[RMDB]
An RNA of 177 nucleotides, treated with 2A3 and DMS and read out base by base. The DMS profile rests on 2,963 reads. The RNA was probed in 150 mM KOAc, 10 mM MgCl2 and 150 mM bicine (pH 8.5) at 24 C.
RNA sequence: GGGAACGACUCGAGUAGAGUCGAAAAAUGGUAGGUGAAGGCUUAGCAAUCAAAGCUCAUGAAGAAUCCAAAGUAAUCGCACCGUUCAAUGGUUUAAUAUCUAUGAUUGUACCAACUAAGCAUGCAGACGAAGGAAGACUUUCGAGUCUUCCUUCGUAAAAGAAACAACAACAACAAC
Reactivity to 2A3 in 0.01 (KOAc 150mM, MgCl2 10mM, bicine 150mM(pH8.5), 24C), signal-to-noise 3, nucleotides 027 to 126: a010u240g000g000u090a120g000g030u090g080a140a050g020g000c000u000u000a000g000c010a000a000u080c020a080a030a000g030c000u040c080a030u070g040a000a100g030a060a060u030c020c000a010a110a000g060u060a030a050u110c020g020c090a040c000c040g000u090u110c060a070a080u080g000g150u050u060u220a090a100u100a050u250c120u110a090u100g040a070u050u050g030u100a100c040c000a030a090c030u090a000a010g030c070a020u250g040c080a020g040
Reactivity to DMS in 0.01 (KOAc 150mM, MgCl2 10mM, bicine 150mM(pH8.5), 24C), signal-to-noise 3, nucleotides 027 to 126: a070u010g000g050u020a040g000g010u020g010a160a160g020g020c050u010u000a020g000c030a030a010u010c060a030a070a150g000c140u040c170a020u000g020a050a070g040a070a040u020c020c040a010a000a130g000u040a040a070u000c020g010c070a050c030c030g000u000u000c030a060a160u010g000g000u000u010u000a060a050u030a080u020c100u000a020u010g000a070u000u000g000u020a130c110c070a020a250c140u020a050a020g010c000a040u000g080c090a120g000